[RMDB]
RNA sequence: GGGAACGACUCGAGUAGAGUCGAAAAGGUGUGGACGAGUGAGUGGUGAUCAUGUUGGAGUUUUAUCCGCAUCACAUGAACCUGAAUCCGGCCAUGCUGCCGGAACAUGGAGGCACGAUGACCGGCCCUAGAAUCUGCGUUUCGACGCAGAUUCUAGAAAAGAAACAACAACAACAAC
Reactivity to DMS in 0.01 (KOAc 150mM, MgCl2 10mM, bicine 150mM(pH8.5), 24C), signal-to-noise 2, nucleotides 027 to 126: g000g040u010g040u000g000g020a040c090g000a120g000u000g010a140g030u020g010g010u000g000a130u000c100a080u000g030u010u020g020g000a070g000u000u030u030u040a060u000c080c020g010c060a090u000c090a100c060a030u000g030a050a110c050c030u020g020a150a140u000c040c010g050g010c010c070a070u030g000c150u010g000c000c000g010g010a030a010c060a060u010g000g020a130g010g000c110a050c040g050a090u020g000a090c050c030g000g010c110c020